An RNA of 177 nucleotides, treated with 2A3 and DMS and read out base by base.
RNA sequence: GGGAACGACUCGAGUAGAGUCGAAAAGAUAUGGAGUGACUUGUCAGCCACCCUACUGCGAUGAAAGCUGUCGGAAACGACAGCUGGAGCAGUAGGAAGUGGCUUGGAUUUAGUCACUCCUAAGUCACUAAAAUUGAACGUUCGCGUUCAAUUUUAGAAAAGAAACAACAACAACAAC
Reactivity to 2A3 in 0.01 (KOAc 150mM, MgCl2 10mM, bicine 150mM(pH8.5), 24C), signal-to-noise 1, nucleotides 027 to 126: g050a000u080a080u210g020g000a010g010u000g010a000c010u010u050g000u020c010a010g030c000c000a000c010c000c000u010a010c010u010g080c010g300a300u060g070a030a000a040g000c010u000g020u000c010g010g000a170a090a070c010g020a000c010a020g000c000u000g000g000a010g020c000a000g000u000a000g000g000a010a000g000u000g000g110c000u010u080g000g010a010u180u190u110a000g010u000c000a000c000u000c000c000u000a010a000g000u000c010a010
Reactivity to DMS in 0.01 (KOAc 150mM, MgCl2 10mM, bicine 150mM(pH8.5), 24C), signal-to-noise 2, nucleotides 027 to 126: g010a070u010a300u010g000g010a020g040u000g000a000c000u000u010g000u000c020a060g030c010c010a010c000c000c000u000a010c000u010g010c010g000a190u010g010a130a160a050g010c000u000g020u000c000g000g000a150a070a260c010g010a010c000a000g000c020u010g010g000a060g010c000a010g010u010a010g000g000a040a040g040u000g010g000c000u000u000g000g010a010u000u020u000a010g020u000c000a000c000u010c000c000u000a000a070g020u010c020a290
Values cover nucleotides 27 to 126. DMS adducts were read by reverse transcription with MarathonRT.